[RMDB]
RNA sequence: GGGAACGACUCGAGUAGAGUCGAAAAUGCAGUUCGCUGCACCUAAUGAUAUGGAGGAUUUAAGAAGCUACGGAGGAGGGAUCGGAAACGAUCCCUCUCCCCACCCGUAGAACUACUUCCAUAAUCCUCCUAAGUCCUCGUGACUCUUCGGAGUCAACAACGUCACGUUGUUCGCAACGUGACGUUGAAAAGAAACAACAACAACAAC
Reactivity to 2A3 in 0.01 (KOAc 150mM, MgCl2 10mM, bicine 150mM(pH8.5), 24C), signal-to-noise 2, nucleotides 027 to 156: u060g000c020a000g030u070u100c140g090c140u010g000c010a080c010c010u230a280a200u180g010a000u000a010u020g000g000a000g010g000a000u000u010u030a120a050g000a000a010g020c000u000a000c010g000g000a000g000g010a000g000g000g010a000u000c020g000g000a010a000a010c000g000a000u000c000c010c000u000c010u000c000c000c000c000a000c000c010c000g000u000a000g000a000a010c010u120a030c000u090u000c000c000a030u100a070a000u000c000c000u000c000c000u000a000a000g000u000c010c010u070c120g170u100g000a000c000u000c010u020u100c250g080g000a000g000u000c020a000a010
The record gives the reactivity of an RNA of 207 nucleotides to 2A3. For 2A3, 1,788 sequencing reads were counted. The reactions ran in a buffer of 150 mM KOAc, 10 mM MgCl2 and 150 mM bicine (pH 8.5), at 24 C. It was measured as part of the RMDB library RNAMAK. High 2A3 reactivity points to a flexible backbone, as in loops and unpaired stretches.